Overview
Source: RMDB library TTRDEL, as collected in RNAgym. An RNA of 177 nucleotides, treated with 2A3 and DMS and read out base by base. For 2A3 the reverse transcriptase was SuperScript II with manganese. For 2A3, 3,600 sequencing reads were counted.
[RMDB]
RNA sequence: GGGAACGACUCGAGUAGAGUCGAAAAGAUAUGGAAUACAUAAGGGAGUACGAAGGUCGGAAACGAUGUUGACGUACUUUGAUCUUAUGAAUAUUCCUAAGUCAAAACCCUAGCUUCGGCUAGGGAACUUCUCACAUACGUUCGCGUAUGUGAGAAGAAAAGAAACAACAACAACAAC
Reactivity to 2A3 in 0.01 (KOAc 150mM, MgCl2 10mM, bicine 150mM(pH8.5), 24C), signal-to-noise 2, nucleotides 027 to 126: g010a000u040a020u070g040g000a020a000u030a050c010a000u010a020a000g060g000g000a010g000u000a010c020g000a040a000g150g020u000c010g000g030a040a020a010c010g000a010u040g270u300u080g230a140c040g000u000a000c000u180u130u090g020a020u010c000u010u000a000u010g060a180a060u090a020u070u000c020c000u000a040a000g010u000c050a000a020a130a300c000c000c010u010a000g010c000u040u060c300g140g000c000u000a000g000g000g030a000a000
Reactivity to DMS in 0.01 (KOAc 150mM, MgCl2 10mM, bicine 150mM(pH8.5), 24C), signal-to-noise 3, nucleotides 027 to 126: g000a020u010a160u000g010g000a010a020u000a060c010a010u000a000a000g020g030g010a010g050u000a000c010g030a280a090g000g040u000c000g030g020a020a030a120c000g010a020u000g010u010u000g020a270c070g000u010a000c000u000u010u000g010a040u010c000u000u010a000u000g010a270a150u010a060u000u000c000c000u000a030a130g000u000c010a080a090a070a160c010c000c000u000a010g010c010u010u020c260g020g020c000u000a020g010g010g000a030a010